[RMDB]
RNA sequence: GGGAACGACUCGAGUAGAGUCGAAAAGGAGCUCGGCAAGCUCUUAUUCGUAGGUAGAGCUUGCGUUCGCUCUACCUUACCACCGGAGCGAACUGUAGGGUCGGUGGUAUCGUGACUCUACAGUUAGGGCACGAUACGAAAUUGCUCUAACCGAGCACGAGCAUUAGCGUUUCGACGCUAAUGCUCGAAAAGAAACAACAACAACAAC
Reactivity to 2A3 in 0.01 (KOAc 150mM, MgCl2 10mM, bicine 150mM(pH8.5), 24C), signal-to-noise 1, nucleotides 027 to 156: g120g010a060g000c020u020c040g040g010c030a030a080g000c020u050c020u030u040a130u020u090c080g030u060a020g040g000u000a000g000a000g030c040u130u210g040c170g140u140u060c040g000c000u000c000u000a010c000c000u010u030a010c000c020a000c050c010g020g020a000g050c000g010a060a020c030u050g060u170a030g070g010g000u020c040g000g150u150g000g050u050a090u050c010g050u070g110a190c000u010c010u000a010c030a140g020u190u030a000g020g000g000c000a000c020g050a070u080a050c040g000a040a000a000u020u010g000c000u020c000u020a090a050c000c010g010a010g030c000a010